[RMDB]
RNA sequence: GGGAACGACUCGAGUAGAGUCGAAAAUACACUUUACGUGUGCUGGUUUCAUUACUUUGUGCCAAACCAGGCACGCGUAAUUAAAGGCCAGUUUGGCCAGGUCCGCGUUAUCGAUGGUCACCAAUAAUUCUCUUCUAGGUUUCGACCUAGAAGAGAAAAAAGAAACAACAACAACAAC
Reactivity to DMS in 0.01 (KOAc 150mM, MgCl2 10mM, bicine 150mM(pH8.5), 24C), signal-to-noise 4, nucleotides 027 to 126: u010a120c100a180c080u000u000u000a010c020g010u000g020u010g010c020u000g010g010u000u000u010c070a040u000u010a090c190u000u020u010g030u000g020c300c180a030a010a040c040c040a060g010g020c010a010c000g020c040g020u000a000a000u000u010a080a080a070g000g020c000c010a110g010u010u000u000g020g020c000c000a040g010g000u010c020c020g010c050g010u000u010a080u010c040g000a080u010g010g000u010c040a100c060c050a060a090u000a080a100
Reactivity to 2A3 in 0.01 (KOAc 150mM, MgCl2 10mM, bicine 150mM(pH8.5), 24C), signal-to-noise 2, nucleotides 027 to 126: u030a000c010a010c060u030u010u000a000c010g000u030g000u000g070c000u000g000g040u030u000u000c030a050u040u140a140c190u160u230u280g030u080g060c040c080a010a000a010c000c030a070g210g000c000a020c000g000c000g000u040a010a000u090u060a110a030a030g030g000c010c000a090g100u160u170u200g020g020c020c000a010g010g010u010c000c000g000c050g020u060u020a110u090c060g040a090u040g040g020u060c010a000c060c080a020a080u200a100a080
Source: RMDB library M2PK90, as collected in RNAgym. Chemical mapping of a 177-nucleotide RNA with DMS and 2A3. For 2A3, 1,294 sequencing reads were counted. The RNA was probed in 150 mM KOAc, 10 mM MgCl2 and 150 mM bicine (pH 8.5) at 24 C. 2A3 adducts were read by reverse transcription with SuperScript II with manganese. For DMS, 2,977 sequencing reads were counted. Reactivities are given for positions 27 through 126.